[RMDB]
RNA sequence: GGGAACGACUCGAGUAGAGUCGAAAAAUAUGAAAGUGUACAGCAUAUCCUUGAGCCAGCAGGCUGCCUGGUUGCUUCUGCCACUCCCUUCAAAAGCAAGAUCGGUGUUUGGGACUUCCCUUCCCCAUGUCUGUGCUCUGCUGUUGGCAGGAGGAUGUCUAAGGGUCUAAUUCGUUAGACCCUUAGAAAAAGAAACAACAACAACAAC
Reactivity to DMS in 0.01 (KOAc 150mM, MgCl2 10mM, bicine 150mM(pH8.5), 24C), signal-to-noise 3, nucleotides 027 to 156: a100u000a050u000g010a090a060a090g020u010g000u000a090c020a090g020c020a190u000a060u000c000c030u000u010g010a210g010c000c010a110g010c060a090g050g010c030u000g010c040c040u000g020g030u000u000g030c010u010u000c030u000g030c040c020a080c060u000c010c010c050u000u000c060a030a060a000a090g000c060a060a100g010a080u000c090g040g030u000g000u000u000u000g020g010g020a110c070u000u000c030c010c020u000u010c020c010c000c020a090u010g000u010c020u000g030u010g020c050u010c050u000g030c020u010g030u000u000g020g020c010a060g010g000a040g020g010a070u000g020
Reactivity to 2A3 in 0.01 (KOAc 150mM, MgCl2 10mM, bicine 150mM(pH8.5), 24C), signal-to-noise 2, nucleotides 027 to 156: a000u220a060u160g100a120a060a100g060u070g000u100a120c060a070g040c030a040u050a050u220c030c000u030u070g000a010g000c000c000a000g040c010a030g080g040c030u030g020c000c000u030g050g050u050u050g000c030u000u050c000u030g000c010c000a060c060u060c010c020c000u080u020c090a200a090a010a020g000c020a020a020g020a100u160c060g000g000u040g040u030u130u130g060g000g030a070c070u060u190c040c000c000u020u020c000c000c000c000a000u040g030u100c010u000g080u020g040c020u030c050u150g060c040u020g040u210u010g020g000c050a040g000g010a000g010g030a000u050g000

An RNA of 207 nucleotides, treated with DMS and 2A3 and read out base by base. 2A3 adducts were read by reverse transcription with SuperScript II with manganese.